[RMDB]
RNA sequence: GGGAACGACUCGAGUAGAGUCGAAAAGCUCAGGCAGGGUUGCUGGCUAGGAAACUGGCCGCGCUGGCGGAGCAGCAGGAGCGCUUGAAGCGGUGCUCCGAAGAGAUGACCAUCGUGCGGCGUGAGGGCUAGUAUGUCCAUUCGUGGACAUACUAGCAAAAGAAACAACAACAACAAC
Reactivity to 2A3 in 0.01 (KOAc 150mM, MgCl2 10mM, bicine 150mM(pH8.5), 24C), signal-to-noise 1, nucleotides 027 to 126: g000c030u010c040a030g140g000c020a010g090g000g110u130u190g060c060u120g030g000c020u000a000g080g020a040a060a050c010u000g030g000c000c000g000c000g050c000u000g030g030c010g020g000a040g030c020a000g000c010a010g020g030a030g000c020g030c050u150u120g180a180a020g070c040g050g010u010g000c010u000c000c010g010a070a000g060a000g010a050u110g060a080c030c020a000u050c050g070u050g040c010g000g000c030g000u040g050a110g050g060
Reactivity to DMS in 0.01 (KOAc 150mM, MgCl2 10mM, bicine 150mM(pH8.5), 24C), signal-to-noise 3, nucleotides 027 to 126: g010c010u000c010a050g030g020c030a060g010g000g020u000u010g040c020u000g060g010c010u000a020g000g020a120a090a180c030u000g000g000c000c010g010c020g020c020u010g010g020c030g020g010a060g030c020a100g010c090a260g000g000a030g010c000g020c010u010u010g000a130a110g000c150g000g010u000g000c010u000c020c010g010a050a150g000a090g010a080u010g010a190c040c020a060u010c110g020u010g010c000g010g010c020g020u000g000a090g000g000
Record summary:
An RNA of 177 nucleotides, treated with 2A3 and DMS and read out base by base. Conditions: 150 mM KOAc, 10 mM MgCl2 and 150 mM bicine (pH 8.5), 24 C. For 2A3 the reverse transcriptase was SuperScript II with manganese. It was measured as part of the RMDB library OK2TRN.